[RMDB]
RNA sequence: GGGAACGACUCGAGUAGAGUCGAAAACCAUAACAGUUCGCUGUUAUGGACUGUCGGAAUGCGGAAUAAUUAAUCGUCCGCUUAGGAUUAAUACCGACUAUAAAGCGUAACACUUCGGUGUUACGAACUUCCUUGCGGGAUUCGUCCCGCAAGGAAGAAAAGAAACAACAACAACAAC
Reactivity to DMS in 0.01 (KOAc 150mM, MgCl2 10mM, bicine 150mM(pH8.5), 24C), signal-to-noise 1, nucleotides 027 to 126: c000c000a000u000a000a000c000a000g000u000u020c250g020c000u000g010u010u000a010u010g000g010a100c120u010g000u000c000g000g000a170a150u010g000c000g000g030a030a030u000a210a100u000u020a060a090u000c190g010u000c000c000g070c020u000u000a070g000g030a190u000u010a060a170u000a050c000c000g000a010c000u000a140u000a040a050a150g000c040g010u000a010a010c010a010c010u000u010c230g000g020u000g000u000u020a000c030g000a040a090
Reactivity to 2A3 in 0.01 (KOAc 150mM, MgCl2 10mM, bicine 150mM(pH8.5), 24C), signal-to-noise 1, nucleotides 027 to 126: c000c000a000u000a010a000c010a020g060u040u100c150g090c110u000g000u000u010a000u000g000g020a050c010u020g020u000c000g010g000a110a030u080g000c030g000g060a030a030u130a090a190u260u170a130a070u170c100g010u020c040c010g000c000u010u070a030g020g000a010u160u090a060a010u020a150c000c000g020a010c040u040a070u060a140a060a020g080c010g000u000a000a000c000a010c010u040u050c190g000g000u020g000u010u000a000c000g000a010a000
Record summary: The record gives the reactivity of an RNA of 177 nucleotides to DMS and 2A3. The RNA was probed in 150 mM KOAc, 10 mM MgCl2 and 150 mM bicine (pH 8.5) at 24 C. For DMS the reverse transcriptase was MarathonRT. Values cover nucleotides 27 to 126. It was measured as part of the RMDB library M2PK50.